[RMDB]
RNA sequence: GGGAACGACUCGAGUAGAGUCGAAAAGGAGAGGUCAUGGUGCAAAUUCUCAUGUAAAGUUGAAGAGACCACUAUUUUUGAUGUUUGUGUCUGCUCAGGAGGACCAAUAUUGAGCCUGGGGAUGGUGGCAAGAGGAAAAUGAAUUAGUUCCUCUCUACUGCACUAAUUAGUUCGCUAAUUAGUGCAGAAAAGAAACAACAACAACAAC
Reactivity to 2A3 in 0.01 (KOAc 150mM, MgCl2 10mM, bicine 150mM(pH8.5), 24C), signal-to-noise 4, nucleotides 027 to 156: g030g000a020g010a010g000g040u060c020a060u090g020g000u040g010c040a050a050a120u200u040c090u030c040a050u130g050u150a080a110a130g020u070u090g070a110a060g060a000g030a040c010c060a020c050u090a170u070u130u010u120u080g080a070u060g100u030u140u090g060u030g030u010c010u040g020c030u010c070a050g010g020a010g010g020a020c020c010a040a070u120a100u100u050g010a010g020c020c050u050g000g020g000g020a030u020g000g040u010g000g000c040a040a010g000a040g010g050a020a030a010a040u190g080a020a060u100u030a100g030u020u030c010c000u010c010u000c000u040a050
Reactivity to DMS in 0.01 (KOAc 150mM, MgCl2 10mM, bicine 150mM(pH8.5), 24C), signal-to-noise 2, nucleotides 027 to 156: g000g000a150g010a040g070g030u000c000a090u010g020g020u000g000c060a090a070a120u010u000c050u000c020a130u010g030u010a060a050a130g020u000u010g020a070a100g010a160g030a080c070c010a070c040u000a090u000u000u000u000u000g040a080u010g010u000u000u010g040u020g000u000c030u010g010c070u000c070a130g020g000a100g020g000a090c060c020a050a100u010a150u000u010g010a050g020c060c050u000g000g020g020g010a070u010g020g040u000g010g000c050a040a000g010a080g000g000a050a020a090a160u020g000a050a100u000u000a130g020u000u000c020c010u000c020u000c020u010a120